RNA sequence: GGGAACGACUCGAGUAGAGUCGAAAAGGCAGGAAUAGAAUGGGCCGAAUCUAGUGAUUCACUGCAGGCCAGAUGCUAUUUUUGUUUGGCGCAAGGCCUGGUGGCUGAUGCGGCUGUGUUCUAAUAGCAAUAUUAUUAAAUUCGUUUAAUAAUAUUGAAAAGAAACAACAACAACAAC
Reactivity to DMS in 0.01 (KOAc 150mM, MgCl2 10mM, bicine 150mM(pH8.5), 24C), signal-to-noise 6, nucleotides 027 to 126: g000g010c040a060g010g000a110a100u000a010g000a040a010u000g000g010g000c010c010g010a070a040u010c020u040a030g020u010g000a110u040u050c020a020c040u010g010c060a030g020g020c010c010a050g010a170u030g010c010u000a010u020u030u030u040u050g010u020u020u010g000g010c000g010c100a160a180g000g010c010c010u000g000g020u010g000g010c010u000g010a030u010g010c030g000g000c010u000g030u030g020u010u000c010u010a050a150u060a170g000
Reactivity to 2A3 in 0.01 (KOAc 150mM, MgCl2 10mM, bicine 150mM(pH8.5), 24C), signal-to-noise 3, nucleotides 027 to 126: g060g020c060a030g050g040a080a050u020a020g010a010a000u040g020g030g000c000c000g000a010a000u010c030u060a020g020u040g090a010u150u080c010a010c020u100g020c030a000g000g000c000c000a010g040a030u030g000c000u010a080u060u090u000u060u110g290u090u090u080g020g000c010g000c040a020a010g000g000c010c000u000g010g000u010g000g000c000u010g000a010u070g020c000g010g000c010u060g110u040g010u300u010c020u040a090a130u080a140g020

Chemical mapping of a 177-nucleotide RNA with DMS and 2A3.
The RNA was probed in 150 mM KOAc, 10 mM MgCl2 and 150 mM bicine (pH 8.5) at 24 C.
DMS (dimethyl sulfate) methylates the pairing face of unpaired adenines and cytosines.
It was measured as part of the RMDB library OK1LIB.